Structure probing data (DMS and 2A3) for a 177-nucleotide construct. Source: RMDB library M2PK50, as collected in RNAgym. 2A3 adducts were read by reverse transcription with SuperScript II with manganese. The 2A3 profile rests on 10,725 reads. For DMS the reverse transcriptase was MarathonRT. The RNA was probed in 150 mM KOAc, 10 mM MgCl2 and 150 mM bicine (pH 8.5) at 24 C.
[RMDB]
RNA sequence: GGGAACGACUCGAGUAGAGUCGAAAAGUCUCUAUCUUCGGAUAGAGACAAAUAUAAGUACGACUUAGAGCUAGAUCAAUUAAUAUCGUGGACAUCGUAAAAAAAGAGGUAUGUUCGCAUACCUCAACUUACUUGUUAUGUUCGCAUAACAAGUAAGAAAAGAAACAACAACAACAAC
Reactivity to DMS in 0.01 (KOAc 150mM, MgCl2 10mM, bicine 150mM(pH8.5), 24C), signal-to-noise 5, nucleotides 027 to 126: g000u000c010u010c010u000a010u000c000u000u010c200g020g000a020u000a000g010a020g010a000c010a010a030a060u010a100u010a090a080g000u000a040c070g000a030c150u000u010a100g000a120g020c020u000a080g010a050u000c100a060a100u010u020a110a110u010a050u010c040g010u000g010g000a060c090a120u000c060g010u010a000a010a070a070a030a090a130g000a020g000g000u000a000u000g010u000u010c170g010c000a010u000a000c000c000u000c010a020a060
Reactivity to 2A3 in 0.01 (KOAc 150mM, MgCl2 10mM, bicine 150mM(pH8.5), 24C), signal-to-noise 6, nucleotides 027 to 126: g000u000c000u000c000u010a010u020c010u010u060c240g130g000a000u000a010g000a030g010a000c000a000a000a000u020a000u010a040a040g070u030a020c040g030a020c050u040u110a050g010a030g120c040u040a030g020a080u030c050a050a050u110u140a140a090u130a030u240c060g070u090g030g020a010c020a050u040c070g060u160a020a090a030a020a000a020a120g000a000g000g000u000a000u010g030u020u070c190g000c070a000u000a000c000c010u000c000a000a000